[RMDB]
RNA sequence: GGGAACGACUCGAGUAGAGUCGAAAACCCCACGACCGUCCAGCCCCUGACGGGGCACCCCAUCCUGAGGGGCUCUGCAUUGGCCCCCACCGAGGCAGGGGAUCUGACCGACUCGGAGCCCGGCUGGGUCUAACGAGUGUUUCGACACUCGUUAGACAAAAGAAACAACAACAACAAC
Reactivity to DMS in 0.01 (KOAc 150mM, MgCl2 10mM, bicine 150mM(pH8.5), 24C), signal-to-noise 1, nucleotides 027 to 126: c100c000c000c070a070c070g000a110c070c030g000u010c010c030a130g020c020c030c000c000u030g010a100c280g030g010g000g000c060a000c020c000c000c000a060u000c040c010u000g020a100g050g000g020g060c000u000c020u000g010c150a130u020u010g000g010c000c020c000c000c010a050c050c060g000a050g020g010c130a050g000g000g000g020a000u030c070u020g010a120c000c030g030a100c080u000c000g000g000a060g020c010c050c050g020g030c030u020g040g000
Reactivity to 2A3 in 0.01 (KOAc 150mM, MgCl2 10mM, bicine 150mM(pH8.5), 24C), signal-to-noise 2, nucleotides 027 to 126: c000c000c010c000a040c060g070a050c020c030g040u040c030c030a010g020c000c000c000c000u040g040a050c120g000g000g000g000c000a020c000c000c010c020a070u070c000c030u080g080a130g030g010g000g000c000u020c000u080g050c030a120u060u170g040g010c000c000c000c010c000a030c030c040g050a030g070g000c040a050g000g020g010g010a010u040c030u060g070a090c000c010g050a040c020u020c020g030g000a030g000c000c000c000g030g000c020u090g070g060